[RMDB]
RNA sequence: GGGAACGACUCGAGUAGAGUCGAAAACCCUGGUUAUUCGUAACCAGGGGUUGAGUGAAUCCUCUCAGUGCAUCGGUGGAUCUCACGAAACGCAUGGACGACAAUUACGGUUAUUCGUAACCGUAAACCUACGUUUGGCAUUCGUGCCAAACGUAGGAAAAGAAACAACAACAACAAC
Reactivity to DMS in 0.01 (KOAc 150mM, MgCl2 10mM, bicine 150mM(pH8.5), 24C), signal-to-noise 2, nucleotides 027 to 126: c010c000c000u000g000g000u000u000a060u000u010c140g010u010a010a010c000c000a000g030g000g000g000u000u010g020a280g000u000g020a020a050u010c000c030u010c040u010c110a110g020u000g010c140a100u010c090g000g020u000g030g000a040u000c140u010c000a030c020g030a060a020a050c030g000c060a110u000g000g020a040c050g010a070c140a090a200u000u000a000c010g000g000u000u000a030u000u010c230g000u000a010a000c000c000g010u010a000a010a110
Reactivity to 2A3 in 0.01 (KOAc 150mM, MgCl2 10mM, bicine 150mM(pH8.5), 24C), signal-to-noise 2, nucleotides 027 to 126: c010c000c000u000g000g020u020u000a050u030u040c220g010u030a010a000c000c010a000g010g010g000g010u050u060g040a040g010u000g030a030a020u010c040c000u000c010u020c080a050g090u090g210c060a130u080c100g070g010u020g020g030a020u010c030u000c090a030c000g060a060a050a000c070g040c070a080u120g060g050a010c040g010a030c050a080a080u080u010a000c000g010g010u000u030a020u000u070c210g030u040a000a000c000c000g000u000a000a000a040

Annotation
Chemical mapping of a 177-nucleotide RNA with DMS and 2A3. The DMS profile rests on 1,369 reads. It was measured as part of the RMDB library M2PK50. Values are in units of 0.01, from 0 to 300, in steps of 10. For 2A3, 2,091 sequencing reads were counted.